The record gives the reactivity of an RNA of 177 nucleotides to DMS and 2A3. For DMS the reverse transcriptase was MarathonRT. The reactions ran in a buffer of 150 mM KOAc, 10 mM MgCl2 and 150 mM bicine (pH 8.5), at 24 C. It was measured as part of the RMDB library OK2TST. Reactivities are given for positions 27 through 126. The 2A3 profile rests on 777 reads. The DMS profile rests on 550 reads.

RNA sequence: GGGAACGACUCGAGUAGAGUCGAAAAACAACGAAUAAAUGUCUAGGUCGUGGAUCUCGAAACGAGAGUCUAAGCUUCUUUACAUUCUCUUAACAACGACAGAGCUGUAUUUAAAAACAGGUCAACCGUGCCACUUAGAAUUCGUUCUAAGUGGCACAAAAGAAACAACAACAACAAC
Reactivity to DMS in 0.01 (KOAc 150mM, MgCl2 10mM, bicine 150mM(pH8.5), 24C), signal-to-noise 1, nucleotides 027 to 126: a050c130a030a060c130g000a060a060u000a070a060a070u000g010u000c030u030a010g010g010u000c040g030u000g000g020a090u000c030u000c020g000a080a040a140c140g020a020g000a040g000u000c050u030a090a100g010c160u000u000c100u000u000u010a110c080a080u000u000c070u000c040u010u000a080a090c170a080a020c060g000a090c050a140g000a040g000c160u000g040u000a050u020u010u000a110a030a100a070a010c030a000g010g020u000c010a130a090c200c140
Reactivity to 2A3 in 0.01 (KOAc 150mM, MgCl2 10mM, bicine 150mM(pH8.5), 24C), signal-to-noise 1, nucleotides 027 to 126: a000c030a030a030c050g070a060a020u090a130a190a010u160g020u020c040u010a050g080g060u020c010g110u040g060g000a020u000c010u010c030g120a110a110a140c180g000a030g010a020g090u000c000u000a030a050g000c060u080u020c000u000u120u010a010c000a050u090u010c040u020c000u060u080a180a130c050a000a050c050g120a020c010a090g030a010g060c040u020g040u050a130u040u220u180a110a140a000a000a000c010a000g020g130u070c010a010a000c100c000